[RMDB]
RNA sequence: GGGAACGACUCGAGUAGAGUCGAAAAAGGAACUGCUGAGGCGGCUUCUACCUCGUAUAGUCGAAAUCAAACGGACCUUAAGCCGUUUCCUUCUGCAGGCAGUGCAUCUUCAUCAAUUAAAACGACACACGUCGUAUGAUUUCGAUCAUACGACGUGAAAAGAAACAACAACAACAAC
Reactivity to 2A3 in 0.01 (KOAc 150mM, MgCl2 10mM, bicine 150mM(pH8.5), 24C), signal-to-noise 3, nucleotides 027 to 126: a000g060g000a020a020c010u020g020c010u030g000a010g010g010c000g000g030c010u070u000c020u040a080c020c070u110c070g030u050a060u080a110g090u050c030g030a070a050a040u120c050a080a060a040c060g050g030a040c010c090u100u100a090a010g010c010c010g010u020u030u030c010c010u070u070c010u040g060c040a020g060g000c000a010g010u000g020c010a090u020c030u100u050c030a100u060c040a060a150u190u230a150a170a050a040c050g110a020c020a010
Reactivity to DMS in 0.01 (KOAc 150mM, MgCl2 10mM, bicine 150mM(pH8.5), 24C), signal-to-noise 3, nucleotides 027 to 126: a020g010g010a150a050c040u000g000c010u000g030a070g000g010c130g000g000c030u020u000c060u000a100c110c070u000c080g000u020a100u020a110g010u000c050g000a070a040a060u020c170a040a030a070c100g000g010a070c040c090u000u030a090a060g010c010c010g000u000u000u010c080c070u010u000c050u020g000c070a180g000g000c050a040g000u000g000c110a060u010c030u000u010c070a050u010c090a040a120u000u000a020a030a070a080c130g010a160c210a150

Structure probing data (2A3 and DMS) for a 177-nucleotide construct. The RNA was probed in 150 mM KOAc, 10 mM MgCl2 and 150 mM bicine (pH 8.5) at 24 C.